[RMDB]
RNA sequence: GGGAACGACUCGAGUAGAGUCGAAAAGGAGUGCCGUUUCCGCUCGUUGUUCACGUCCCGAACUAUGGGACUGACGAAUCUUGGGAAGGGAUCGACGAUCUCUCGGAGCAUAAGGCUAUAUUUGACGAGAUCGAUAAUCGGCUGUCUCAAAUCGCCACUGAUUCCCAAGUUUCGACUUGGGAAUCAGAAAAGAAACAACAACAACAAC
Reactivity to 2A3 in 0.01 (KOAc 150mM, MgCl2 10mM, bicine 150mM(pH8.5), 24C), signal-to-noise 2, nucleotides 027 to 156: g060g010a020g030u070g070c090c030g000u010u040u000c010c000g000c060u110c040g010u010u020g000u030u020c070a020c120g010u000c000c000c000g040a230a050c150u130a300u300g010g010g000a000c000u000g000a000c010g010a040a100u100c110u090u070g000g000g050a050a020g180g050g030a220u070c010g040a010c030g000a000u000c000u000c000u000c030g040g040a020g010c040a130u120a270a070g190g040c040u050a050u020a050u150u100u190g030a060c150g000a010g000a010u030c000g020a040u110a050a080u020c010g050g000c050u060g110u090c000u000c000a030a040a010u040c020g010c020c010a030